[RMDB]
RNA sequence: GGGAACGACUCGAGUAGAGUCGAAAAUAGUUAGUUCGCUAACUAGCAGCACCUUUGUGUCCGAGCUACUGUUGACGAGACUUGAUACGCCCAUUGGGCGUAUAAGUCUCGAAGGGUACUCGGACACUCUGGUCAAUCUGAGCCUUUCGAGGCUCAACGCACAAACCACAUUCGUGUGGUUUGUGCGAAAAGAAACAACAACAACAAC
Reactivity to DMS in 0.01 (KOAc 150mM, MgCl2 10mM, bicine 150mM(pH8.5), 24C), signal-to-noise 1, nucleotides 027 to 156: u010a010g000u020u000a010g020u000u000c200g000c090u000a010a030c000u000a010g020c090a080g010c140a140c010c010u000u000u010g010u000g030u000c010c020g000a070g030c050u000a030c000u000g040u000u020g000a300c060g000a050g010a040c010u000u000g040a040u000a000c000g040c000c000c000a300u000u010g060g070g000c010g000u010a010u020a000a020g030u000c010u010c000g000a050a050g010g010g000u000a010c030u000c000g000g020a000c020a000c000u000c040u050g050g000u010c070a170a160u000c030u000g000a030g010c000c010u000u010u000c230g020a060g020g000c000u010c000a020a030
Reactivity to 2A3 in 0.01 (KOAc 150mM, MgCl2 10mM, bicine 150mM(pH8.5), 24C), signal-to-noise 2, nucleotides 027 to 156: u070a000g010u010u000a000g030u070u060c230g020c120u000a000a010c000u010a030g090c030a020g030c030a030c000c010u030u020u000g000u000g000u000c000c000g010a000g060c090u060a000c000u020g210u300u080g130a100c030g000a000g000a000c000u000u030g080a000u000a010c010g000c070c050c040a300u190u300g000g000g000c000g000u000a000u000a000a010g000u000c000u000c000g000a000a000g060g020g000u010a000c000u000c010g000g000a000c000a000c000u000c000u000g000g000u000c010a020a120u050c100u090g000a000g000c010c000u120u100u180c250g130a010g000g010c000u000c010a000a030
Source information
Structure probing data (DMS and 2A3) for a 207-nucleotide construct. High DMS reactivity at an A or C suggests that its Watson-Crick edge is free. It was measured as part of the RMDB library RNAMAK.